[RMDB]
RNA sequence: GGGAACGACUCGAGUAGAGUCGAAAAUUGCUGCUGCUGCUGGAGGUGACCCUGCGGCGAGGUGGGACUGGGCUGAUUGGUGCUGGCGGAUCCACCAUUGCUGGCGCUGGUUGUGACCGGCUGCUGAAGUCAUCACUAGGUUCGCCUAGUGAUGACUAAAAGAAACAACAACAACAAC
Reactivity to DMS in 0.01 (KOAc 150mM, MgCl2 10mM, bicine 150mM(pH8.5), 24C), signal-to-noise 1, nucleotides 027 to 126: u000u020g020c010u000g030c030u000g030c010u010g000c000u000g010g000a100g020g010u010g000a140c060c030c030u000g000c120g000g000c020g010a040g000g020u000g000g020g000a110c080u000g000g000g000c010u000g000a190u000u040g000g020u000g000c050u000g010g000c020g000g000a100u030c030c010a050c040c030a090u000u000g000c040u000g070g010c040g000c000u010g000g000u000u020g000u020g000a190c030c040g010g030c000u010g020c010u000g000a100
Reactivity to 2A3 in 0.01 (KOAc 150mM, MgCl2 10mM, bicine 150mM(pH8.5), 24C), signal-to-noise 2, nucleotides 027 to 126: u100u080g030c010u010g000c010u030g000c010u000g010c000u020g040g010a040g010g120u110g030a060c020c010c000u010g000c010g030g030c030g070a060g000g010u070g020g040g000a060c040u080g020g080g000c050u030g030a170u090u110g070g040u070g030c000u020g040g090c000g070g010a080u020c020c030a010c020c020a060u030u160g020c050u020g030g000c040g000c050u020g030g000u120u020g100u030g070a050c010c000g020g000c020u090g000c020u030g050a050